[RMDB]
RNA sequence: GGGAACGACUCGAGUAGAGUCGAAAACGCGAACCAUCUGGAGAAGUUCGUGAAGCGCCGUCUUUGGAUUCCACAGAUCGGACGUUCUGGUCGCAUUCAGUUUGGCCUUGAACUGCUUACGAUAGUAGACUAUUAGAACGUUCGCGUUCUAAUAGUCAAAAGAAACAACAACAACAAC
Reactivity to DMS in 0.01 (KOAc 150mM, MgCl2 10mM, bicine 150mM(pH8.5), 24C), signal-to-noise 5, nucleotides 027 to 126: c060g010c020g010a030a040c020c040a130u000c070u010g010g000a150g010a120a130g010u000u000c020g020u000g010a080a080g010c070g020c070c050g000u000c020u000u000u000g000g010a180u000u020c030c030a050c070a050g010a050u000c040g000g000a140c070g010u000u000c040u010g010g010u000c010g010c070a070u000u000c090a040g010u000u000u010g000g010c070c090u010u000g010a030a030c020u000g000c040u000u000a050c030g010a050u000a090g010u010a160
Reactivity to 2A3 in 0.01 (KOAc 150mM, MgCl2 10mM, bicine 150mM(pH8.5), 24C), signal-to-noise 6, nucleotides 027 to 126: c020g000c000g000a010a010c020c010a100u090c090u170g060g030a150g030a150a060g030u030u040c010g020u040g090a050a030g070c040g020c050c020g050u020c010u060u110u070g180g090a300u240u110c020c010a030c000a030g030a050u150c060g030g050a050c040g020u040u020c030u070g030g000u010c010g010c050a040u110u110c020a040g060u040u090u140g060g020c020c000u040u080g010a020a010c010u020g010c010u050u050a040c030g030a020u030a060g080u050a020
The record gives the reactivity of an RNA of 177 nucleotides to DMS and 2A3.
The RNA was probed in 150 mM KOAc, 10 mM MgCl2 and 150 mM bicine (pH 8.5) at 24 C.
DMS adducts were read by reverse transcription with MarathonRT.